[RMDB]
RNA sequence: GGGAACGACUCGAGUAGAGUCGAAAAGCAGGAGUCCGUGCAGAAAACCUGCACCACUUCCUCGAUGCCGGAGUGCUGGAAGUCCAUAGCUCCGCGGGAGCGUGGCAAGCCUCACCGAUGCGUUAUCAUUGUACACUACCUUCGGGUAGUGUACAAUAAAAGAAACAACAACAACAAC
Reactivity to 2A3 in 0.01 (KOAc 150mM, MgCl2 10mM, bicine 150mM(pH8.5), 24C), signal-to-noise 6, nucleotides 027 to 126: g080c050a010g010g030a010g030u050c080c060g020u040g000c000a000g110a080a140a040a050c010c010u000g000c010a000c000c010a000c010u240u180c000c020u030c020g030a040u150g010c000c020g000g010a090g010u200g020c030u040g020g040a090a040g060u040c000c000a010u040a140g010c000u020c010c040g230c070g160g090g010a000g000c000g010u000g000g000c020a040a030g040c000c000u020c010a050c020c020g060a080u110g020c050g040u040u060a130u160c050
Reactivity to DMS in 0.01 (KOAc 150mM, MgCl2 10mM, bicine 150mM(pH8.5), 24C), signal-to-noise 5, nucleotides 027 to 126: g010c120a040g010g000a020g020u000c150c300g000u000g000c000a020g000a160a100a130a180c260c010u000g000c010a020c010c250a040c050u000u020c000c020u000c060g010a090u020g000c040c040g000g000a070g020u010g020c030u000g000g000a040a080g020u050c010c000a030u000a110g020c010u000c010c000g040c190g000g000g000a020g010c030g000u000g000g000c000a140a040g010c000c010u000c030a120c090c030g010a100u020g010c060g010u010u020a080u020c090